Source information
Structure probing data (DMS and 2A3) for a 177-nucleotide construct.

[RMDB]
RNA sequence: GGGAACGACUCGAGUAGAGUCGAAAAUGAGCGCGGCCGCUAUGCGUUGCCAGGUGGCGAUGUCGCCACUUUCCAGCGCCGAACGAAUGGCGACGGUAGGCCAGAACUCGACCCGCCGGUCGACGUCCUACGAACUCGGUUUCGACCGAGUUCGUAGAAAAGAAACAACAACAACAAC
Reactivity to DMS in 0.01 (KOAc 150mM, MgCl2 10mM, bicine 150mM(pH8.5), 24C), signal-to-noise 3, nucleotides 027 to 126: u020g000a050g030c110g000c300g040g000c020c030g080c160u030a060u000g000c010g010u000u000g000c040c080a080g040g010u010g000g030c020g000a250u030g020u160c030g010c000c000a010c000u010u010u000c060c030a080g020c050g040c030c060g000a100a090c120g040a140a060u000g010g000c000g010a020c030g000g030u020a070g030g030c040c000a070g000a140a030c010u000c020g000a050c010c000c100g020c080c020g000g000u000c030g000a060c140g000u030c070
Reactivity to 2A3 in 0.01 (KOAc 150mM, MgCl2 10mM, bicine 150mM(pH8.5), 24C), signal-to-noise 5, nucleotides 027 to 126: u210g010a050g020c030g000c050g030g000c000c020g030c080u070a060u140g100c000g010u000u030g000c000c010a010g000g010u010g010g000c030g180a290u300g210u300c030g000c000c000a010c000u020u030u020c040c020a050g020c020g000c020c070g010a100a030c050g040a050a050u070g010g000c020g020a010c000g010g070u090a070g040g010c000c000a030g050a050a000c020u010c010g010a040c000c000c010g000c050c050g000g010u010c000g020a080c040g050u040c010
Overview: Conditions: 150 mM KOAc, 10 mM MgCl2 and 150 mM bicine (pH 8.5), 24 C. The 2A3 profile rests on 4,340 reads.